RNA sequence: GGGAACGACUCGAGUAGAGUCGAAAAUACGUGCCGGAGAGCGAUGCAGCCGCCCGCGUCACUGCCAUACUCAGCAGCCUCACUGUAACCCAGCUCCUGAGGCGACUGCAUCAGUGGAUAAGCUCGGGACAGGGAUAGGGUUCGCCCUAUCCCUGUCAAAAGAAACAACAACAACAAC
Reactivity to 2A3 in 0.01 (KOAc 150mM, MgCl2 10mM, bicine 150mM(pH8.5), 24C), signal-to-noise 3, nucleotides 027 to 126: u210a040c040g020u040g010c000c020g010g000a100g000a000g040c030g010a010u040g000c000a000g010c000c010g000c000c030c010g020c050g010u020c020a050c060u030g010c020c000a050u080a150c040u060c070a040g000c010a010g020c020c010u050c010a100c060u070g030u070a080a060c000c010c010a030g030c020u040c020c000u080g000a050g040g000c010g010a030c010u040g000c020a010u030c030a060g050u080g060g070a120u140a170a070g020c020u040c000g020g040
Reactivity to DMS in 0.01 (KOAc 150mM, MgCl2 10mM, bicine 150mM(pH8.5), 24C), signal-to-noise 2, nucleotides 027 to 126: u050a040c120g010u010g020c020c000g000g030a120g000a180g000c050g000a050u010g020c010a050g010c030c000g000c040c010c090g020c110g010u030c030a010c060u000g000c010c040a070u030a070c100u010c080a110g000c080a110g000c050c030u000c060a060c070u000g010u010a050a050c070c020c020a030g000c070u000c020c030u000g010a110g020g010c000g000a060c040u030g000c020a040u050c060a010g000u000g020g010a070u000a130a080g000c010u000c000g030g000

Structure probing data (2A3 and DMS) for a 177-nucleotide construct.